[RMDB]
Structure probing data (2A3 and DMS) for a 177-nucleotide construct. The RNA was probed in 150 mM KOAc, 10 mM MgCl2 and 150 mM bicine (pH 8.5) at 24 C. Values cover nucleotides 27 to 126. For 2A3 the reverse transcriptase was SuperScript II with manganese. For 2A3, 2,213 sequencing reads were counted.
RNA sequence: GGGAACGACUCGAGUAGAGUCGAAAAGCCGCAGGGAAGAUUUUCCCUUUCCGUAUCGGCACCGUGCAGCAUGGUCCACUCGUCUUCCCCUCCGCCUCAACGCUCUAAAUGUUGCAGCCGAACGAGCCCACGUAGGUCAUUUCGAUGACCUACGUGGAAAAGAAACAACAACAACAAC
Reactivity to 2A3 in 0.01 (KOAc 150mM, MgCl2 10mM, bicine 150mM(pH8.5), 24C), signal-to-noise 4, nucleotides 027 to 126: g040c060c040g030c070a040g000g050g040a090a070g090a240u140u050u060u280c020c000c070u010u030u010c050c000g060u080a100u180c040g010g000c020a000c050c030g080u060g000c010a030g020c020a010u080g060g010u050c020c000a040c020u030c030g130u040c000u050u080c000c000c000c000u010c020c000g030c010c020u030c020a040a050c020g000c030u010c000u070a120a160a060u120g000u050u030g000c010a000g010c000c010g050a070a080c040g010a000g000c000
Reactivity to DMS in 0.01 (KOAc 150mM, MgCl2 10mM, bicine 150mM(pH8.5), 24C), signal-to-noise 1, nucleotides 027 to 126: g000c000c060g010c300a080g030g000g020a000a000g000a160u100u000u000u030c000c000c010u000u000u000c010c050g000u030a140u080c050g010g000c020a240c020c020g040u010g000c040a110g010c140a060u080g010g000u040c050c070a100c040u010c120g000u000c030u000u000c050c000c000c050u030c000c040g000c000c000u000c030a070a130c060g000c050u000c050u020a040a130a030u010g060u000u000g030c060a150g040c090c050g000a090a110c000g040a170g030c200